[RMDB]
RNA sequence: GGGAACGACUCGAGUAGAGUCGAAAAUUGGACAUUGUAAAUGGCCACCUGCAAUGUCUCUUAGGCUAAAUGGUGCAGCCAACUAAGGCAGGGCGGUUAAAAAACAGGAAAUUCAGCAUCUAGGUUAAUCCCAUAUGGGAUUCGUCCCAUAUGGGAUAAAAGAAACAACAACAACAAC
Reactivity to DMS in 0.01 (KOAc 150mM, MgCl2 10mM, bicine 150mM(pH8.5), 24C), signal-to-noise 4, nucleotides 027 to 126: u000u000g000g000a040c020a040u000u000g010u000a020a090a120u010g000g010c010c000a040c100c080u000g000c040a040a050u000g000u000c010u000c120u000u010a130g000g010c070u010a060a080a070u000g010g020u000g010c070a090g020c020c020a060a140c120u000a070a070g000g000c040a040g000g000g020c060g030g000u000u000a000a080a030a040a050a060c100a080g000g000a040a050a110u000u000c110a040g010c050a030u010c030u000a050g020g000u010u000a090
Reactivity to 2A3 in 0.01 (KOAc 150mM, MgCl2 10mM, bicine 150mM(pH8.5), 24C), signal-to-noise 1, nucleotides 027 to 126: u100u060g020g000a020c010a010u050u030g040u060a020a170a240u070g030g000c010c010a030c010c020u030g020c000a020a060u030g050u010c000u020c030u100u160a070g050g000c030u040a090a110a070u160g010g000u030g080c040a000g040c020c000a000a090c060u060a120a000g030g000c020a010g040g000g010c040g030g000u060u020a100a140a040a030a030a000c050a030g020g040a060a030a060u080u060c030a000g050c020a050u040c030u030a020g000g140u030u070a040
About this RNA: An RNA of 177 nucleotides, treated with DMS and 2A3 and read out base by base. Conditions: 150 mM KOAc, 10 mM MgCl2 and 150 mM bicine (pH 8.5), 24 C. 2A3 adducts were read by reverse transcription with SuperScript II with manganese. It was measured as part of the RMDB library OK2TRN.